[RMDB]
RNA sequence: GGGAACGACUCGAGUAGAGUCGAAAAGAUAUGGAUCAACAUCCAUACCGACUCCAUCGAUCUUACGUAACAUCUUUCGGAAACGAAAGUGGUAAGGGAGGAGGGGUAUGGAUGUUGAUCCUAAGUCCGUGACUACAUUGUUCGCAAUGUAGUCACGAAAAGAAACAACAACAACAAC
Reactivity to DMS in 0.01 (KOAc 150mM, MgCl2 10mM, bicine 150mM(pH8.5), 24C), signal-to-noise 2, nucleotides 027 to 126: g010a100u020a300u010g010g010a010u010c030a010a020c010a010u000c000c010a010u000a010c000c000g000a280c000u010c010c010a300u010c240g010a070u000c000u020u000a000c000g000u000a050a100c180a030u000c000u010u000u000c010g020g000a070a140a260c000g040a000a010a000g050u010g010g000u000a000a000g000g000g000a020g030g020a030g000g000g000g030u000a000u000g000g000a000u000g000u010u000g020a000u000c010c000u000a010a080g010u010c040